[RMDB]
About this RNA:
The record gives the reactivity of an RNA of 207 nucleotides to 2A3. For 2A3, 517 sequencing reads were counted. Conditions: 150 mM KOAc, 10 mM MgCl2 and 150 mM bicine (pH 8.5), 24 C. For 2A3 the reverse transcriptase was SuperScript II with manganese.
RNA sequence: GGGAACGACUCGAGUAGAGUCGAAAAAUACUGUAAGCCAAUAAAACAUAACGCCAAAUACAAUAAAUGCUGGAUGAUGUACUUUCUAUGUGAUAUUUUGGCGUUAUUUUGAUUUACCAUUGCACAUCAUCCAUGUUAACAGGCUAUACGGUUAUAACUCCAUGAGCUGAUUCGUCAGCUCAUGGAGAAAAGAAACAACAACAACAAC
Reactivity to 2A3 in 0.01 (KOAc 150mM, MgCl2 10mM, bicine 150mM(pH8.5), 24C), signal-to-noise 1, nucleotides 027 to 156: a000u070a000c000u040g000u000a010a010g000c000c000a030a080u070a080a140a000a000c050a040u030a050a000c000g000c000c000a040a000a020u140a080c050a100a050u180a110a150a090u230g010c100u070g000g000a000u000g000a000u000g010u070a150c210u020u270u060c070u160a080u180g100u020g050a070u050a100u250u050u040u040g000g000c000g000u010u010a000u000u050u000u090g010a020u000u100u180a030c030c000a070u110u050g000c010a000c000a030u000c000a000u000c000c020a000u030g000u010u030a040a000c010a000g000g030c020u030a120u000a260c000g020g000u090u050a140u010a050a010